RNA sequence: GGGAACGACUCGAGUAGAGUCGAAAAGUCCUAGCGAAAAGCUAGGACAAGUGCAUCGCUAGACAGAUCGUCGAAAAGACGAUCGGAUGCACAUGUCUAGUGAAAAGUCGAGGAGAACUCGACAAAACAUCAGGAGCUCAUUCGUGAGCUCCUGAUGAAAAGAAACAACAACAACAAC
Reactivity to DMS in 0.01 (KOAc 150mM, MgCl2 10mM, bicine 150mM(pH8.5), 24C), signal-to-noise 2, nucleotides 027 to 126: g000u000c000c000u000a010g000c010g000a100a100a060a200g000c000u000a000g000g000a020c040a010a010g000u010g000c090a090u000c000g000c060u000a100g040a010c120a120g000a010u000c020g000u000c000g000a060a020a110a280g000a000c000g010a000u000c030g020g000a100u000g000c140a080c040a130u000g010u000c050u060a070g010u010g010a130a050a200a090g000u000c000g000a000g000g000a150g000a110a160c000u000c020g000a000c010a020a020a130a260
Reactivity to 2A3 in 0.01 (KOAc 150mM, MgCl2 10mM, bicine 150mM(pH8.5), 24C), signal-to-noise 2, nucleotides 027 to 126: g020u000c000c000u030a030g020c000g040a120a120a190a000g010c010u000a000g000g050a000c000a000a000g020u000g160c060a070u040c040g020c040u030a030g000a070c050a090g010a000u000c000g040u010c020g010a250a080a000a120g000a000c000g000a000u000c020g000g010a040u100g030c000a000c020a030u070g040u000c010u000a000g060u070g130a050a110a000a000g030u000c000g000a000g000g030a140g060a260a200c000u000c000g010a020c000a000a010a000a000